[RMDB]
RNA sequence: GGGAACGACUCGAGUAGAGUCGAAAACAUUGCUGUUCGCAGCAAUGAAAAAACCUUUGUGAUCCUGUCAGGCUUGGACCAUAUCCGACCCAUUGGGUCGAGAUAUGCUAGCCUCCUAGGAUCACUCUGGUAAAAAAGGAGAGAUUCGUCUCUCCAAGAGCACUGAAGAGUUCGCUCUUCAGUGCUCAAAAGAAACAACAACAACAAC
Reactivity to 2A3 in 0.01 (KOAc 150mM, MgCl2 10mM, bicine 150mM(pH8.5), 24C), signal-to-noise 2, nucleotides 027 to 156: c000a010u000u000g010c010u000g030u160u240c300g010c110a010g010c010a010a000u040g050a200a000a000a000a000a000c010c030u040u000u010g020u000g000a010u010c000c000u030g030u010c040a010g050g000c010u070u140g100g090a100c140c000a010u010a000u000c000c010g020a010c000c000c130a280u180u300g020g000g000u030c000g010a060g000a030u000a000u000g000c010u010a000g010c000c000u000c000c000u010a000g000g000a000u000c000a010c000u000c000u000g000g010u010a070a060a040a100a060a010g010g010a020g010a010g000a000u020u100c240g120u010c120u000c000u010c000c000a020a010